[RMDB]
RNA sequence: GGGAACGACUCGAGUAGAGUCGAAAAGUGUGCAUUUCUUGCUAUUGCUGCUUAGCUUCUCUAAAACACUGGGCUACGUUUUUCAACGCUCGAGAGGCAGAGUCUCAAGGAGCCUCCAAUGGGCCUCGCUCAUUUAGAUGUUCGCAUCUAAAUGAGCAAAAGAAACAACAACAACAAC
Reactivity to DMS in 0.01 (KOAc 150mM, MgCl2 10mM, bicine 150mM(pH8.5), 24C), signal-to-noise 1, nucleotides 027 to 126: g040u010g030u000g010c050a040u000u010u000c060u020u000g010c080u030a030u020u000g000c000u000g000c030u000u000a060g000c090u000u010c010u000c020u000a070a100a070a070c090a060c090u000g000g000g010c050u010a080c060g010u000u000u010u010u000c070a080a130c130g000c020u000c050g000a110g010a050g000g040c040a130g000a150g000u000c010u000c030a090a180g020g000a080g020c020c010u000c040c180a100a090u000g010g000g030c020c040u000c120
Reactivity to 2A3 in 0.01 (KOAc 150mM, MgCl2 10mM, bicine 150mM(pH8.5), 24C), signal-to-noise 1, nucleotides 027 to 126: g030u060g050u040g010c010a030u000u150u010c050u140u150g040c040u090a090u130u100g010c080u010g000c020u040u040a020g020c010u070u020c070u000c010u080a070a090a000a020c020a050c060u030g000g030g000c000u060a040c030g030u000u020u020u040u160c060a090a020c000g030c010u050c040g050a050g010a020g080g000c020a030g000a010g110u000c030u000c100a030a130g160g020a020g050c000c010u040c040c010a010a080u160g020g020g000c020c000u010c040